RNA sequence: GGGAACGACUCGAGUAGAGUCGAAAAGGAAGUGGAAUUCGUUCCACUUCCAAAAAGAUAUGGAAGUUCCGACCUUGGAUUUAGGGAUCGGAAACGAUCCCUUGUCAGGUUCGGAGACUUCCUAAGUCAAAAAGAGAGCGUGUUCGCACGCUCUCAACUGGAUAUAUUCGUUCGCGAAUAUAUCCAGAAAAGAAACAACAACAACAAC
Reactivity to 2A3 in 0.01 (KOAc 150mM, MgCl2 10mM, bicine 150mM(pH8.5), 24C), signal-to-noise 2, nucleotides 027 to 156: g010g020a000a010g000u010g000g030a010a030u080u080c110g010u040u000c000c000a000c000u000u020c000c000a000a010a000a000a000g010a020u030a000u030g000g010a000a000g000u030u010c000c000g000a000c000c000u050u160g250g020a080u300u300u060a020g000g010g000a000u000c000g000g040a050a040a000c020g000a000u010c070c000c020u000u000g000u000c010a000g040g000u040u090c030g000g020a040g000a000c000u020u000c000c000u000a040a010g010u000c020a070a080a060a080a000g020a000g010a000g000c020g020u030g020u080u200c250g010c110a000c000g000c000u010c000u000c000a000a000
Reactivity to DMS in 0.01 (KOAc 150mM, MgCl2 10mM, bicine 150mM(pH8.5), 24C), signal-to-noise 1, nucleotides 027 to 156: g020g010a000a010g050u000g030g010a040a050u000u010c300g030u000u000c010c000a030c010u000u000c000c000a000a000a070a060a120g030a090u000a280u010g000g000a050a040g010u000u000c000c000g020a030c060c000u000u010g030g030a050u000u000u000a040g010g010g010a000u000c000g010g000a080a070a120c020g030a030u010c000c010c000u000u000g000u000c050a030g010g030u030u000c010g030g020a040g000a020c000u000u000c010c010u000a000a080g020u000c040a070a080a120a170a120g010a030g000a050g030c000g030u010g000u000u000c220g020c020a040c000g020c000u000c000u010c000a000a040